[RMDB]
RNA sequence: GGGAACGACUCGAGUAGAGUCGAAAAAGAAAGCGGACAUCGCCGCCGGACACGGGGAGAAUCCCUAUCUUCACGUAGGUUGCGGCGACCGAGGCCUCGGGAAACGUCUUCCUCUACAUCUGGCCAGGGUAUAGAUAUCUCAGAGGUACGCGUACCCCUACACUGAUAGGUUCGCCUAUCAGUGUAGAAAAGAAACAACAACAACAAC
Reactivity to DMS in 0.01 (KOAc 150mM, MgCl2 10mM, bicine 150mM(pH8.5), 24C), signal-to-noise 2, nucleotides 027 to 156: a110g010a100a110a120g000c040g010g000a260c090a130u000c020g000c000c000g030c010c130g010g010a090c020a040c000g020g000g010g020a020g020a050a110u000c040c070c050u000a120u000c000u000u000c000a060c010g020u000a080g050g010u010u010g010c000g020g020c000g040a040c000c060g000a180g000g000c010c020u000c020g060g030g000a010a130a070c090g020u000c050u000u000c050c010u000c040u010a050c080a160u000c060u020g020g020c100c120a140g040g030g000u000a080u000a030g020a080u000a080u000c030u000c030a090g000a070g050g010u020a020c020g000c020g040u000a200c040c010c070
Reactivity to 2A3 in 0.01 (KOAc 150mM, MgCl2 10mM, bicine 150mM(pH8.5), 24C), signal-to-noise 4, nucleotides 027 to 156: a000g130a060a050a000g030c010g020g020a030c030a110u010c010g020c000c010g010c020c050g030g000a020c020a000c040g000g000g030g010a010g020a060a120u220c040c010c020u070a110u030c010u000u000c010a000c000g030u020a080g070g060u060u090g030c000g000g000c020g000a000c020c010g010a020g080g050c000c000u010c010g010g000g000a060a090a050c100g030u000c000u020u010c000c010u020c040u050a080c050a220u100c150u220g100g020c110c060a040g020g000g010u100a060u100a130g030a020u030a030u020c030u020c070a030g010a010g020g020u050a090c020g010c000g050u110a100c000c000c000